[RMDB]
The record gives the reactivity of an RNA of 177 nucleotides to 2A3 and DMS. For DMS the reverse transcriptase was MarathonRT. The 2A3 profile rests on 4,605 reads. The RNA was probed in 150 mM KOAc, 10 mM MgCl2 and 150 mM bicine (pH 8.5) at 24 C. Reactivities are given for positions 27 through 126.
RNA sequence: GGGAACGACUCGAGUAGAGUCGAAAAGCGGGGACAAGCCUUGACUGGAAACUGAGGCUGGGUCUACGGUGUCCGUCAAAAUAUCGAACGGUAUGUCUAUCGAACGGUAUGUCGAUAUUUCGACAGAAUCCUGGCCAGGAUUCGUCCUGGCCAGGAUAAAAGAAACAACAACAACAAC
Reactivity to 2A3 in 0.01 (KOAc 150mM, MgCl2 10mM, bicine 150mM(pH8.5), 24C), signal-to-noise 5, nucleotides 027 to 126: g050c000g010g010g020g000a010c010a020a020g020c000c030u050u050g100a130c080u110g070g210a110a070a010c080u090g020a010g050g000c000u050g070g140g000u000c010u010a060c060g030g080u150g060u010c020c010g010u030c040a030a050a010a030u030a000u020c010g030a040a050c010g020g030u130a050u150g150u060c080u100a160u190c090g030a080a050c010g010g030u040a030u110g030u020c000g010a000u000a060u080u080u030c030g010a010c000a020g150a010
Reactivity to DMS in 0.01 (KOAc 150mM, MgCl2 10mM, bicine 150mM(pH8.5), 24C), signal-to-noise 3, nucleotides 027 to 126: g020c000g010g000g000g000a010c030a220a020g000c010c010u000u030g000a050c150u000g040g010a080a130a200c100u020g000a000g000g050c000u000g010g000g010u000c000u000a050c020g020g020u000g000u000c030c000g020u050c070a090a040a080a050u000a000u010c000g000a020a300c020g010g000u010a010u080g020u010c140u000a040u040c090g020a060a280c040g010g000u010a010u030g020u010c040g010a030u030a120u000u020u000c020g000a010c030a160g000a090